[RMDB]
RNA sequence: GGGAACGACUCGAGUAGAGUCGAAAAGCGGUUGGCCGGACGCUGCUUGCAUGGUCGGGGAUGGCGAUAAUAUACGCUGAAUGGAAUCCAGCUAAGUACCCGAUUGCAUGACCAUUACCGCAAAGAAAUAUAAUGACUGUUUCGACAGUCAUUAUAUAAAAGAAACAACAACAACAAC
Reactivity to DMS in 0.01 (KOAc 150mM, MgCl2 10mM, bicine 150mM(pH8.5), 24C), signal-to-noise 9, nucleotides 027 to 126: g010c020g010g020u010u000g010g020c060c020g020g020a140c200g000c020u010g010c030u000u010g020c030a040u010g000g010u000c020g000g000g010g010a150u020g000g010c050g010a080u010a080a110u020a100u010a070c140g000c010u010g000a060a080u020g010g010a090a280u020c090c030a050g010c020u000a050a090g010u000a230c010c010c010g000a040u000u010g000c020a020u010g000a160c020c020a060u010u020a120c040c030g010c100a120a090a080g000a060a090
Reactivity to 2A3 in 0.01 (KOAc 150mM, MgCl2 10mM, bicine 150mM(pH8.5), 24C), signal-to-noise 9, nucleotides 027 to 126: g010c010g000g040u070u060g100g040c080c030g030g000a030c040g010c030u020g010c000u020u030g010c010a020u040g030g000u020c010g000g010g000g020a080u130g060g060c040g020a010u060a170a080u110a070u030a060c080g000c020u030g040a070a060u100g060g110a040a050u060c050c000a000g010c020u030a070a030g020u040a070c000c000c010g010a010u010u090g090c010a010u030g020a020c010c000a030u040u160a090c020c010g010c020a050a080a000g080a020a200